[RMDB]
Chemical mapping of a 207-nucleotide RNA with DMS and 2A3. The DMS profile rests on 3,123 reads.
RNA sequence: GGGAACGACUCGAGUAGAGUCGAAAACAUUUUGGUCUACACAGCUCACUUGGUACUUCGGUGACAGCAUCCUUUCUGGAUCCCUUGGCAAAUCACACGGAAUAUCAGUUCAGCUAUUUUCUCCAAUUCGAUACGGAAACUACACCUGUCAAGCCGGGACUAAUAUCGAGUUCGCUCGAUAUUAGUCAAAAGAAACAACAACAACAAC
Reactivity to DMS in 0.01 (KOAc 150mM, MgCl2 10mM, bicine 150mM(pH8.5), 24C), signal-to-noise 2, nucleotides 027 to 156: c090a150u010u000u000u020g030g010u000c020u000a110c070a100c030a020g080c010u000c040a090c030u030u000g080g020u000a030c020u000u000c090g030g010u000g030a090c060a130g000c050a240u000c030c020u000u010u000c120u000g030g000a100u010c040c010c040u080u000g000g020c110a090a110a080u000c040a050c050a090c090g040g020a040a040u000a020u010c020a060g050u000u000c030a050g030c030u000a030u010u000u000u000c040u000c000c000a060a110u000u020c070g000a080u000a130c040g000g010a140a090a080c060u000a080c050a060c010c020u000g010u010c000a050a100g000c030c040g000g010
Reactivity to 2A3 in 0.01 (KOAc 150mM, MgCl2 10mM, bicine 150mM(pH8.5), 24C), signal-to-noise 6, nucleotides 027 to 156: c040a040u110u120u060u150g040g020u030c050u090a050c080a010c030a100g020c010u030c040a050c050u070u120g020g000u050a030c020u030u040c060g040g000u040g040a030c020a030g030c010a060u050c000c010u100u220u180c100u110g000g020a040u070c050c020c030u050u080g050g000c060a070a070a060u070c010a030c030a030c050g040g010a010a010u030a020u100c010a020g040u090u020c030a010g010c010u040a070u100u060u050u040c060u030c020c030a060a100u120u110c050g080a050u070a160c030g020g020a040a070a020c060u100a040c040a060c030c020u040g020u050c020a020a040g020c000c010g080g020